[RMDB]
RNA sequence: GGGAACGACUCGAGUAGAGUCGAAAAGGGGGCACCAGCAGCCCAGCGUACCCCUCAAGGCCGCUGCGGUUCACAGACUACGCGUGGUGUGGGCCGGGGCUCAAGGCGACGGCUUCGAGAUAUAGUCGAGAUAUAGUCGAGCCCCGGGUCGAGUGAGCAUAUGGAAUGACUUCGGUCAUUCCAUAUGAAAAGAAACAACAACAACAAC
Reactivity to DMS in 0.01 (KOAc 150mM, MgCl2 10mM, bicine 150mM(pH8.5), 24C), signal-to-noise 1, nucleotides 027 to 156: g030g000g020g010g060c060a080c010c010a100g000c050a130g020c010c010c020a070g030c030g030u000a120c030c020c020c070u010c210a150a100g000g000c230c000g010c000u000g000c100g050g000u010u000c030a190c120a150g020a120c040u000a040c050g010c070g010u010g040g000u010g010u000g010g010g020c000c020g040g000g000g030c000u000c020a040a170g020g010c000g000a100c000g080g010c020u000u010c040g000a270g000a180u010a050u000a050g050u000c020g020a160g020a210u000a130u000a070g020u000c020g020a040g000c010c000c010c010g010g000g030u000c010g030a110g020u000g000a120g000
Reactivity to 2A3 in 0.01 (KOAc 150mM, MgCl2 10mM, bicine 150mM(pH8.5), 24C), signal-to-noise 2, nucleotides 027 to 156: g000g010g040g040g040c020a010c030c000a040g000c020a030g000c050c020c020a000g020c030g010u130a070c050c030c000c030u040c170a060a070g000g030c040c000g000c000u030g020c090g000g090u020u070c100a070c030a120g130a050c190u210a050c140g000c060g090u050g000g040u060g030u090g050g010g000c000c010g010g000g000g020c000u000c010a050a170g040g000c000g030a020c010g040g020c000u100u130c130g140a100g130a170u210a050u130a190g020u000c000g050a020g040a160u160a070u060a110g000u000c010g000a000g000c010c010c000c000g010g010g010u000c010g010a050g060u150g010a040g010
Conditions: 150 mM KOAc, 10 mM MgCl2 and 150 mM bicine (pH 8.5), 24 C. This 207-nucleotide RNA was probed chemically with DMS and 2A3. For DMS, 2,058 sequencing reads were counted.